RNA sequence: GGGAACGACUCGAGUAGAGUCGAAAACGAGAAUUCCUUUGAUGUUUCCCAGCCAGGGGUGAUCGUCCUCGAGUUUCUUGAUUUUCUUCUUCUCCUUCCGGAGGUCUCUUUCGAGAUCUUCUAACCUUUUUCUUCCAUUCACCCACUUCUCGAGGACCUAAAGUACAACCUUCGGGUUGUACUUUAGAAAAGAAACAACAACAACAAC
Reactivity to DMS in 0.01 (KOAc 150mM, MgCl2 10mM, bicine 150mM(pH8.5), 24C), signal-to-noise 1, nucleotides 027 to 156: c040g030a190g000a170a120u000u000c030c040u020u000u020g010a170u000g020u000u000u010c020c020c020a300g000c100c050a110g060g010g020g000u000g000a080u000c040g020u000c010c000u000c000g000a070g020u030u000u000c030u010u010g010a120u000u010u010u000c030u000u000c020u000u000c020u000c030c030u000u010c090c120g000g000a010g030g010u000c000u010c010u000u010u010c210g010a030g010a010u010c000u000u010c020u010a060a050c020c020u000u000u000u020u020c010u000u010c020c020a180u000u000c070a170c060c030c000a070c080u000u020c030u010c020g010a040g010g020a050c070
Reactivity to 2A3 in 0.01 (KOAc 150mM, MgCl2 10mM, bicine 150mM(pH8.5), 24C), signal-to-noise 2, nucleotides 027 to 156: c030g040a060g060a040a110u110u120c000c000u030u050u110g100a080u100g080u030u100u080c010c010c010a030g050c080c050a070g000g000g040g000u080g070a060u200c020g000u010c000c000u020c010g000a010g050u110u180u050c070u130u120g100a160u060u120u090u020c010u120u010c010u130u020c010u050c030c010u090u080c100c030g050g010a000g010g000u000c000u020c000u120u300u270c210g010a010g020a020u000c000u040u000c030u020a050a060c020c030u100u210u040u050u020c020u070u040c030c000a050u080u060c020a080c020c000c020a040c080u080u060c000u010c020g000a000g020g000a000c000
Structure probing data (DMS and 2A3) for a 207-nucleotide construct.
Values cover nucleotides 27 to 156.
The data come from the RNA Mapping Database (RMDB), library VIROID.